[RMDB]
This 177-nucleotide RNA was probed chemically with DMS.

RNA sequence: GGGAACGACUCGAGUAGAGUCGAAAAGAUAUGGACCGUUCAUUCGCAGACCAUAGACAUGCGUGAAGGAUCGGAAACGAUCCGUAGCGCAACAGCUAUGGUCUGCGAAUGAGACGGUCCUAAGUCACAAUAAAGGGAGGUUCGCCUCCCUUUAUUGAAAAGAAACAACAACAACAAC
Reactivity to DMS in 0.01 (KOAc 150mM, MgCl2 10mM, bicine 150mM(pH8.5), 24C), signal-to-noise 6, nucleotides 027 to 126: g000a060u000a300u000g010g000a010c000c010g020u020u000c010a020u000u000c000g020c010a000g010a010c000c000a010u000a000g010a050c110a230u000g010c000g000u010g010a270a300g000g000a010u000c010g020g000a060a130a230c000g010a010u000c010c000g000u000a300g000c000g020c000a000a040c300a170g010c010u000a010u000g000g000u000c000u000g010c000g000a000a000u000g000a060g020a010c000g020g020u010c000c010u010a000a060g010u000c030a240

DMS (dimethyl sulfate) methylates the pairing face of unpaired adenines and cytosines. The RNA was probed in 150 mM KOAc, 10 mM MgCl2 and 150 mM bicine (pH 8.5) at 24 C.